[RMDB]
RNA sequence: GGGAACGACUCGAGUAGAGUCGAAAAGCAGGGAAGGGUACUUACCUGUCGUCGUCGACGAAGGCUGGUAAGCAGAGCCCGUUGAAGCUCCCAGUGACGAGCGUCGUCGGAUGGCCUCCGAGACGAGCUGCAUAUCAACCUUCGGGUUGAUAUGCAGAAAAGAAACAACAACAACAAC
Reactivity to DMS in 0.01 (KOAc 150mM, MgCl2 10mM, bicine 150mM(pH8.5), 24C), signal-to-noise 1, nucleotides 027 to 126: g030c010a080g040g030g000a110a090g020g000g000u000a080c000u000u000a020c040c000u020g000u010c000g010u000c000g010u000c280g030a190c090g000a020a040g000g000c010u000g000g010u000a020a000g030c120a080g020a210g020c000c010c000g010u000u000g010a300a170g000c000u000c000c000c000a110g020u010g000a050c150g010a150g010c050g000u000c020g010u000c020g000g000a030u000g000g030c300c030u000c000c000g000a080g000a010c000g000a100g010